[RMDB]
RNA sequence: GGGAACGACUCGAGUAGAGUCGAAAACGCUGGGAUACCUGGAGGCACAUGAACACUAUCUCAACAGCAUGCUGAAGCGCGCACGGCAUGACAUGAGAUAGUGUUUUUGUGUGAAGGGUAUCCUGUGCUGAAGCGCGCACGGCAACCGAAAGGUGCGGCUUGGAGAAGACUUCGGUCUUCUCCAAGCAAAAGAAACAACAACAACAAC
Reactivity to 2A3 in 0.01 (KOAc 150mM, MgCl2 10mM, bicine 150mM(pH8.5), 24C), signal-to-noise 1, nucleotides 027 to 156: c010g010c000u000g000g020g000a020u000a010c000c020u010g040g030a150g210g050c030a030c010a000u090g030a010a000c000a010c000u010a010u000c000u000c000a030a180c020a160g060c010a010u000g000c000u060g070a200a060g090c060g000c030g000c090a020c040g020g000c010a010u030g050a190c050a130u030g000a010g000a020u000a000g000u010g000u000u000u000u000u000g000u010g000u080g000a000a000g000g000g010u000a000u000c000c000u000g000u010g000c000u060g070a080a030g010c020g010c020g000c010a000c010g000g100c000a070a090c020c070g050a110a030a020g150g000u000g010c000g050

The record gives the reactivity of an RNA of 207 nucleotides to 2A3. High 2A3 reactivity points to a flexible backbone, as in loops and unpaired stretches. For 2A3 the reverse transcriptase was SuperScript II with manganese. The RNA was probed in 150 mM KOAc, 10 mM MgCl2 and 150 mM bicine (pH 8.5) at 24 C. It was measured as part of the RMDB library RNAMAK.